[RMDB]
RNA sequence: GGGAACGACUCGAGUAGAGUCGAAAAGAAAAUACAAGGCUGACAAAACCCUGUCCCAACCUCCACGUGGUGUCGGCUGGAUAAUGCUGCAUUAUGUUGCAUUUAUCAACUGGGAUGGGCAAAAAAACACUAUAAUGCUGUUCGCAGCAUUAUAGUGAAAAGAAACAACAACAACAAC
Reactivity to DMS in 0.01 (KOAc 150mM, MgCl2 10mM, bicine 150mM(pH8.5), 24C), signal-to-noise 3, nucleotides 027 to 126: g010a130a110a080a130u010a050c080a110a070g020g000c010u000g020a040c050a070a130a120a190c040c010c030u000g000u000c000c000c010a060a030c010c010u000c030c060a070c120g000u000g000g020u000g000u000c010g000g010c010u010g010g000a020u000a010a010u000g020c010u000g020c010a160u000u020a090u000g010u000u000g010c010a000u000u010u010a000u000c010a030a030c140u000g010g000g000a050u010g000g000g030c220a010a010a020a030a020a040a070
Reactivity to 2A3 in 0.01 (KOAc 150mM, MgCl2 10mM, bicine 150mM(pH8.5), 24C), signal-to-noise 5, nucleotides 027 to 126: g010a000a040a010a010u130a030c030a020a160g020g000c000u020g010a010c030a020a100a090a150c030c010c000u010g010u010c000c000c010a010a040c000c010u040c030c040a130c130g110u190g020g020u020g010u010c000g010g000c000u020g000g000a000u010a030a000u010g000c020u020g000c010a050u120u180a140u300g030u010u010g000c010a000u030u060u090a030u030c010a010a020c020u020g000g010g000a010u030g020g010g000c030a040a050a000a010a010a000a020